[RMDB]
RNA sequence: GGGAACGACUCGAGUAGAGUCGAAAAGUUUUAAUUGAGGGGUGACCCUCAACUGACAUACAAGGGGAGGUUUCGGCCAAAUGUUGUAUGCAGAAAGCGUGAGGAAGGUAGCACUUAGACACUCACGUGCUUAAAUGUCGUUCGCGACAUUUAAGCAAAAAGAAACAACAACAACAAC
Reactivity to DMS in 0.01 (KOAc 150mM, MgCl2 10mM, bicine 150mM(pH8.5), 24C), signal-to-noise 4, nucleotides 027 to 126: g000u030u050u000u000a060a210u000u000g000a000g000g020g000g000u030g000a230c010c000c000u000c010a040a010c000u010g000a130c000a000u010a000c000a030a030g000g020g020g000a300g000g010u020u000u040c060g030g000c020c000a000a200a160u090g010u020u000g020u000a020u000g010c010a000g000a080a060a090g000c000g010u000g000a020g000g000a050a040g000g000u000a130g010c280a290c050u010u000a090g010a180c150a180c000u000c010a000c010g000
Reactivity to 2A3 in 0.01 (KOAc 150mM, MgCl2 10mM, bicine 150mM(pH8.5), 24C), signal-to-noise 3, nucleotides 027 to 126: g030u070u080u090u160a090a020u070u030g000a000g010g030g040g020u080g040a060c000c000c000u000c010a000a000c010u000g000a050c000a000u010a000c040a020a020g010g020g010g010a080g020g020u040u060u110c180g190g000c000c000a010a010a010u100g030u060u000g010u000a000u020g000c000a000g100a080a050a000g070c020g010u010g000a000g060g030a070a060g060g030u080a050g050c050a020c150u010u060a010g030a080c070a000c040u000c000a000c000g010
Structure probing data (DMS and 2A3) for a 177-nucleotide construct. For 2A3 the reverse transcriptase was SuperScript II with manganese. It was measured as part of the RMDB libraries RFM100 and RFMREP.